Description
Structure probing data (2A3 and DMS) for a 207-nucleotide construct. Source: RMDB library ARCHII, as collected in RNAgym. Values cover nucleotides 27 to 156. For DMS the reverse transcriptase was MarathonRT. The DMS profile rests on 4,087 reads.
RNA sequence: GGGAACGACUCGAGUAGAGUCGAAAAAAAGCUGCGUAAGUUCAGUUGAGCCUGAAAUUUAAGUCAUACUAUCUAGCUUAAUUUUCGGUCAUUUUUGAUAGUGUAGCCUUGCGUUUGACAAGCGUUGAGGUGAAAUAAAGUCUUAGCCUUGCUUUUGCAAUCUAUAGUGCUUCGGCACUAUAGAUUGAAAAGAAACAACAACAACAAC
Reactivity to 2A3 in 0.01 (KOAc 150mM, MgCl2 10mM, bicine 150mM(pH8.5), 24C), signal-to-noise 5, nucleotides 027 to 156: a000a000a000g020c030u050g000c040g100u120a180a100g050u130u050c010a010g000u030u040g070a020g030c010c010u020g010a020a010a020u000u010u010a040a010g030u060c000a000u020a060c010u010a010u010c010u010a000g000c000u010u010a010a010u020u010u010u050c050g100g070u080c190a250u060u150u150u180u180g000a000u000a010g010u010g010u000a000g000c000c010u000u010g000c000g070u060u000u010g020a010c000a020a020g000c010g050u080u300g020a000g000g010u010g020a000a010a000u180a060a140a010g010u010c000u030u120a070g030c030c040u050u120g020c010u030u090u040u150g150
Reactivity to DMS in 0.01 (KOAc 150mM, MgCl2 10mM, bicine 150mM(pH8.5), 24C), signal-to-noise 2, nucleotides 027 to 156: a060a050a070g010c010u010g020c030g030u000a080a230g000u030u000c040a070g020u010u010g020a160g020c060c030u020g020a010a010a050u000u000u000a000a020g030u000c010a230u000a040c010u000a040u000c020u010a300g030c010u000u000a020a010u000u000u000u000c040g030g000u060c080a160u000u000u000u010u000g000a020u020a020g000u000g010u000a140g000c000c020u000u000g010c010g000u000u010u000g050a050c080a170a290g000c000g010u000u010g030a010g020g020u000g010a100a020a080u000a140a110a140g030u010c020u000u010a070g000c070c050u000u010g010c030u000u000u060u020g000